[RMDB]
RNA sequence: GGGAACGACUCGAGUAGAGUCGAAAAGUUUUAUUUUCUUAAUCCUGAAGUUCAGAUGCUGUGGCAGCUGGGUAUAAGAUUACAGUUGUUUUCCGACUGGCUUUUGCAUUAUUUCCACAUUUUUGAAACAUAAUUGAUCGUUCGCGAUCAAUUAUGUAAAAGAAACAACAACAACAAC
Reactivity to 2A3 in 0.01 (KOAc 150mM, MgCl2 10mM, bicine 150mM(pH8.5), 24C), signal-to-noise 1, nucleotides 027 to 126: g030u000u010u220u210a080u080u090u040u000c020u010u050a060a070u020c010c030u020g030a090a020g010u080u050c040a030g030a060u030g040c000u090g060u100g140g000c020a010g000c000u030g000g000g090u120a130u010a170a070g050a010u130u080a060c020a040g000u020u000g030u030u120u070u010c030c030g010a010c000u000g070g090c000u080u010u080u030g000c010a050u100u020a000u040u130u000c040c000a110c020a180u050u150u020u000u070g130a190a120
Reactivity to DMS in 0.01 (KOAc 150mM, MgCl2 10mM, bicine 150mM(pH8.5), 24C), signal-to-noise 2, nucleotides 027 to 126: g010u000u020u010u010a060u000u010u010u010c020u010u000a070a150u010c030c020u000g010a080a100g010u010u000c090a070g010a090u010g020c050u000g040u000g010g010c060a050g010c070u000g030g020g010u020a080u000a040a090g000a090u000u010a050c070a050g010u000u000g020u000u000u000u000c170c030g000a040c040u000g020g000c030u010u000u000u000g010c090a030u000u000a080u000u000u000c000c000a090c200a130u010u010u010u000u010g000a140a100
An RNA of 177 nucleotides, treated with 2A3 and DMS and read out base by base.
For DMS the reverse transcriptase was MarathonRT.
It was measured as part of the RMDB library OK2TST.
The 2A3 profile rests on 916 reads.
The RNA was probed in 150 mM KOAc, 10 mM MgCl2 and 150 mM bicine (pH 8.5) at 24 C.
For DMS, 2,082 sequencing reads were counted.
Values cover nucleotides 27 to 126.
For 2A3 the reverse transcriptase was SuperScript II with manganese.